[RMDB]
Annotation: The data come from the RNA Mapping Database (RMDB), library PDB130. Chemical mapping of a 207-nucleotide RNA with DMS and 2A3. Reactivities are given for positions 27 through 156.
RNA sequence: GGGAACGACUCGAGUAGAGUCGAAAAGUCUAAGUGUGAAUGUUCGCAUUCACACUUAGACAAAGAUGAGAUGAGAUGAGAUGAGAUGAGAUGAGAUGAGAUGAGAUGAGAUGAGAUGAAAAACUAUCAGGUACACGUUUCGACGUGUACCUGAUAGCAACAGUGAUCACUUCGGUGAUCACUGUUGAAAAGAAACAACAACAACAAC
Reactivity to DMS in 0.01 (KOAc 150mM, MgCl2 10mM, bicine 150mM(pH8.5), 24C), signal-to-noise 2, nucleotides 027 to 156: g000u010c000u000a000a010g010u010g040u000g000a020a000u000g030u000u000c300g030c020a040u000u000c010a000c000a020c010u000u010a010g010a010c010a040a010a050g020a120u000g000a150g020a030u000g000a120g000a080u010g000a140g010a110u010g000a180g020a100u010g010a210g010a070u000g000a160g000a090u000g010a210g020a090u000g010a160g030a100u000g010a180g000a100u000g000a080g000a090u010g000a040a050a070a080a150c000u000a000u000c000a000g010g010u000a000c000a000c010g010u010u000u020c300g020a070c010g020u000g010u000a000c000c000u000g000a000u000a000g000
Reactivity to 2A3 in 0.01 (KOAc 150mM, MgCl2 10mM, bicine 150mM(pH8.5), 24C), signal-to-noise 4, nucleotides 027 to 156: g000u000c000u000a000a000g000u000g000u000g010a010a000u020g010u070u140c230g020c110a000u000u000c000a000c000a000c000u000u000a000g000a000c000a010a000a000g010a000u050g010a010g010a030u070g010a010g010a050u060g000a030g020a100u060g020a030g010a070u050g010a020g000a080u060g020a020g010a060u060g010a030g020a080u060g020a020g010a070u060g010a010g000a060u050g010a020g010a030u080g070a030a040a080a030a010c000u010a000u010c000a000g010g010u000a000c000a010c000g020u040u070u110c190g070a020c000g000u000g010u000a000c000c000u000g000a000u000a000g000
Overview
The 2A3 profile rests on 6,152 reads. The RNA was probed in 150 mM KOAc, 10 mM MgCl2 and 150 mM bicine (pH 8.5) at 24 C.